[RMDB]
The record gives the reactivity of an RNA of 177 nucleotides to DMS and 2A3. Source: RMDB library TTRDES, as collected in RNAgym. For DMS, 12,214 sequencing reads were counted. DMS adducts were read by reverse transcription with MarathonRT. The RNA was probed in 150 mM KOAc, 10 mM MgCl2 and 150 mM bicine (pH 8.5) at 24 C. The 2A3 profile rests on 12,423 reads. Values cover nucleotides 27 to 126. For 2A3 the reverse transcriptase was SuperScript II with manganese.
RNA sequence: GGGAACGACUCGAGUAGAGUCGAAAAGAUAUGGAGGAGCGGGAGUCCGCGAAACGGUGAUCGUUCGGAAACGAACGCGUACCGGAGGAUCGCUCCUCCUAAGUCAAAAGCCGCGUUCGCGCGGCAAUCUACGAAUAUUGUUCGCAAUAUUCGUAGAAAAAGAAACAACAACAACAAC
Reactivity to DMS in 0.01 (KOAc 150mM, MgCl2 10mM, bicine 150mM(pH8.5), 24C), signal-to-noise 7, nucleotides 027 to 126: g000a040u000a140u010g000g000a010g010g000a020g020c000g000g020g020a300g020u000c000c010g030c180g010a070a100a130c010g000g000u000g010a060u010c010g000u000u000c010g010g000a030a040a100c000g010a010a010c010g000c210g000u010a040c020c000g000g010a050g020g010a060u000c010g000c000u000c000c000u000c010c000u000a000a060g000u010c030a130a120a180a190g000c010c000g000c000g020u000u020c270g030c010g020c020g010g010c000a010a010
Reactivity to 2A3 in 0.01 (KOAc 150mM, MgCl2 10mM, bicine 150mM(pH8.5), 24C), signal-to-noise 4, nucleotides 027 to 126: g010a010u030a010u070g000g010a020g000g000a010g000c060g020g180g110a300g290u000c000c010g000c080g100a080a070a010c000g000g020u030g010a080u300c000g000u010u000c000g010g010a010a030a020c000g010a000a000c020g010c020g080u160a010c000c010g030g020a070g000g010a040u260c010g010c000u000c000c000u010c000c000u000a000a000g000u000c000a000a010a030a150g000c010c020g000c010g040u050u080c250g010c000g000c000g160g000c000a000a000